[RMDB]
RNA sequence: GGGAACGACUCGAGUAGAGUCGAAAAGGAGUUAUUACAGGUAGUGAGAUUUCGAAACAAUAUGGAGAAGCAGGACUUCCUGAAAAUACAAUUAAUGUUUAUACGAAUGGUCAUGCUGGUCAAAGUCAUAAAUAGGCCUGUUCGCAGGCCUAUUUAUAAAAGAAACAACAACAACAAC
Reactivity to 2A3 in 0.01 (KOAc 150mM, MgCl2 10mM, bicine 150mM(pH8.5), 24C), signal-to-noise 2, nucleotides 027 to 126: g090g010a090g000u170u090a070u020u070a070c020a020g070g000u080a010g110u060g070a080g010a180u000u030u070c010g020a000a080a020c060a090a040u150a100u250g050g000a040g000a120a010g100c100a030g030g030a050c000u110u030c000c010u000g010a050a070a000a000u160a030c040a110a000u040u130a090a020u140g030u140u030u050a110u030a030c040g030a060a020u050g010g000u020c010a040u050g010c060u060g010g000u020c000a010a130a050g070u070c020
Reactivity to DMS in 0.01 (KOAc 150mM, MgCl2 10mM, bicine 150mM(pH8.5), 24C), signal-to-noise 4, nucleotides 027 to 126: g000g030a080g020u030u000a040u000u040a160c040a050g010g020u010a020g000u000g010a130g030a060u020u000u000c070g010a170a070a060c100a060a090u040a060u000g000g010a220g010a110a070g010c050a080g010g010a100c130u010u010c010c040u000g020a030a040a050a050u020a010c140a070a130u050u010a030a090u010g000u000u010u020a040u030a300c120g020a040a040u010g000g000u000c020a030u010g000c040u000g000g010u000c080a040a120a050g000u030c120
Conditions: 150 mM KOAc, 10 mM MgCl2 and 150 mM bicine (pH 8.5), 24 C. The record gives the reactivity of an RNA of 177 nucleotides to 2A3 and DMS. For DMS the reverse transcriptase was MarathonRT. High DMS reactivity at an A or C suggests that its Watson-Crick edge is free. The data come from the RNA Mapping Database (RMDB), library OK1LIB.